[RMDB]
RNA sequence: GGGAACGACUCGAGUAGAGUCGAAAAGGGGAUAAGGCUCAUACCGCAAGCACGCGCACGGCGUAAAUCUUUAUGCGGUGCAUCCAAAAUGGUUUGCGUAUUGGUUAGGUUAUGGAUGGUGGUAAAAUAUGGUAUGGAUCUUCGGAUCCAUACCAUAAAAAGAAACAACAACAACAAC
Reactivity to 2A3 in 0.01 (KOAc 150mM, MgCl2 10mM, bicine 150mM(pH8.5), 24C), signal-to-noise 1, nucleotides 027 to 126: g040g020g000g000a050u070a150a070g070g040c040u040c080a010u010a070c010c040g000c040a000a010g000c000a010c120g170c000g000c020a010c070g080g000c020g030u010a060a070a120u130c110u030u080u060a010u040g010c100g110g010u000g000c000a050u020c100c010a000a000a000a150u190g100g000u020u020u040g000c020g010u050a090u010u130g000g010u080u100a040g090g030u100u100a040u100g060g010a110u050g020g060u050g000g000u070a000a000a040a120
Reactivity to DMS in 0.01 (KOAc 150mM, MgCl2 10mM, bicine 150mM(pH8.5), 24C), signal-to-noise 2, nucleotides 027 to 126: g020g000g010g000a120u020a050a130g000g040c030u010c120a110u000a060c100c080g050c030a030a050g010c060a030c110g020c180g000c020a010c010g020g020c000g040u010a020a040a110u000c300u000u000u010a030u010g010c000g010g040u000g030c010a050u020c140c220a020a080a070a090u020g010g010u000u000u000g000c010g010u000a050u000u000g000g000u030u000a050g040g030u000u000a110u010g000g000a080u000g000g010u000g000g010u000a050a070a060a150
Structure probing data (2A3 and DMS) for a 177-nucleotide construct. It was measured as part of the RMDB library OK2TST. The reactions ran in a buffer of 150 mM KOAc, 10 mM MgCl2 and 150 mM bicine (pH 8.5), at 24 C.